[RMDB]
RNA sequence: GGGAACGACUCGAGUAGAGUCGAAAAAGGUGGUGCAUGGCUGUCGUCAGCUCGUGUCGUGAGAUGUUGGGUUAAGUCCCGCAACGAGCGCAACCCUUGUCCUAUGUUGCCAGCAAUUCGGUUGGGGUAAACUACCCUUAUUCGUAAGGGUAGUUUAAAAAGAAACAACAACAACAAC
Reactivity to 2A3 in 0.01 (KOAc 150mM, MgCl2 10mM, bicine 150mM(pH8.5), 24C), signal-to-noise 6, nucleotides 027 to 126: a010g070g010u080g010g030u060g020c040a040u070g040g000c020u030g050u230c080g090u080c030a010g000c010u040c060g060u040g050u040c040g030u040g030a100g000a060u090g040u250u300g050g000g000u080u050a100a100g300u070c000c000c000g000c010a030a030c020g020a010g010c030g000c020a020a050c000c000c000u020u040g010u040c010c000u040a080u170g080u040u090g090c010c000a020g020c030a070a100u140u110c080g080g000u030u050g020g010g000g030
Reactivity to DMS in 0.01 (KOAc 150mM, MgCl2 10mM, bicine 150mM(pH8.5), 24C), signal-to-noise 9, nucleotides 027 to 126: a040g000g020u000g020g020u000g010c040a090u000g010g010c030u000g010u010c130g010u000c040a160g010c010u000c030g020u000g010u000c050g010u010g000a150g000a050u000g020u000u010g030g010g010u000u010a100a170g010u000c000c010c010g010c110a090a030c030g000a110g010c030g010c100a060a070c050c020c010u000u000g000u000c020c010u000a070u010g010u000u000g010c020c020a060g010c050a070a110u010u010c120g010g010u000u000g000g000g000g010
This 177-nucleotide RNA was probed chemically with 2A3 and DMS. Values are in units of 0.01, from 0 to 300, in steps of 10. Reactivities are given for positions 27 through 126. It was measured as part of the RMDB library OK2TRN. For 2A3, 9,656 sequencing reads were counted. 2A3 adducts were read by reverse transcription with SuperScript II with manganese.